[RMDB]
RNA sequence: GGGAACGACUCGAGUAGAGUCGAAAAUCUAGCCGGGGCUGAUGUUAACAGCAUCGGAGGGUAAGAAUGAAUCGAGAUUGGAUGAUCCGCAGCCAACCCCUAAGGCUUGCUGCUAUGGGAGAGGUUCACAGACUAAGUGGAAGUGGGUGGUAUGCUCGGUUAACUUCUUGUUCGCAAGAAGUUAACCAAAAGAAACAACAACAACAAC
Reactivity to DMS in 0.01 (KOAc 150mM, MgCl2 10mM, bicine 150mM(pH8.5), 24C), signal-to-noise 1, nucleotides 027 to 156: u020c020u010a070g040c000c000g020g000g000g070c000u000g000a080u000g020u000u020a200a130c110a140g050c060a020u050c040g000g040a060g000g030g060u020a130a140g010a070a120u000g000a010a060u000c080g000a110g000a200u000u000g030g010a210u000g000a010u000c090c090g060c020a050g010c020c040a000a050c000c050c010c060u000a050a210g030g000c040u000u010g050c050u000g030c060u000a060u020g050g020g030a140g000a210g030g020u000u000c100a030c090a080g010a150c070u020a080a070g050u000g000g000a040a100g040u010g020g020g000u000g000g010u000a090u010g020c000u000c020
Reactivity to 2A3 in 0.01 (KOAc 150mM, MgCl2 10mM, bicine 150mM(pH8.5), 24C), signal-to-noise 2, nucleotides 027 to 156: u040c030u030a020g060c020c010g020g010g050g000c020u000g010a040u090g100u250u100a110a060c050a070g000c010a010u010c000g010g030a030g000g040g040u080a070a010g060a100a010u090g030a050a050u080c060g010a000g040a150u070u060g050g000a050u090g010a060u100c000c040g000c050a000g020c000c000a040a040c040c010c010c020u020a070a030g040g000c010u020u130g020c010u060g000c010u080a110u110g040g030g000a110g000a010g030g000u020u010c040a030c020a060g150a050c080u090a160a000g070u040g010g020a060a030g030u100g010g010g020u040g030g020u090a110u110g010c040u060c060
Structure probing data (DMS and 2A3) for a 207-nucleotide construct. The RNA was probed in 150 mM KOAc, 10 mM MgCl2 and 150 mM bicine (pH 8.5) at 24 C. It was measured as part of the RMDB library ARCHII. Reactivities are given for positions 27 through 156.